An RNA of 177 nucleotides, treated with DMS and 2A3 and read out base by base. The RNA was probed in 150 mM KOAc, 10 mM MgCl2 and 150 mM bicine (pH 8.5) at 24 C.
[RMDB]
RNA sequence: GGGAACGACUCGAGUAGAGUCGAAAACUAAAUAUAAGUUAGGAGAUCGAUAGCAUACAAGUACCGUGAGGGAAAGGUGAAAAGAACUUUGAAAAAAGGUUUAAAAGUAUUUGACACCGUUUAUGUGUAAGAGACGACCAUUCGUGGUCGUCUCUUAAAAAGAAACAACAACAACAAC
Reactivity to DMS in 0.01 (KOAc 150mM, MgCl2 10mM, bicine 150mM(pH8.5), 24C), signal-to-noise 1, nucleotides 027 to 126: c040u000a020a080a040u020a060u020a110a100g010u130u000a090g000g030a140g010a130u000c030g020a110u000a170g020c050a040u000a100c110a040a090g000u000a080c010c000g000u050g000a040g000g000g000a110a120a120g000g010u000g000a180a020a010a080g000a010a020c040u050u000u070g000a000a000a180a050a060a030g040g030u000u010u010a030a040a010a070g020u000a000u050u000u070g010a210c000a020c000c000g010u000u000u030a090u040g040u000g020
Reactivity to 2A3 in 0.01 (KOAc 150mM, MgCl2 10mM, bicine 150mM(pH8.5), 24C), signal-to-noise 1, nucleotides 027 to 126: c000u040a000a000a200u300a000u000a020a040g060u000u020a000g160g000a000g140a160u050c080g060a260u010a100g000c140a000u260a220c020a080a000g100u020a040c000c000g020u100g050a000g000g010g020a000a080a110g120g000u140g000a100a100a000a030g000a000a000c000u000u000u000g000a080a000a000a100a000a170g090g000u040u120u160a060a090a000a090g140u200a250u100u000u240g060a000c000a000c020c010g060u060u060u060a120u100g230u000g000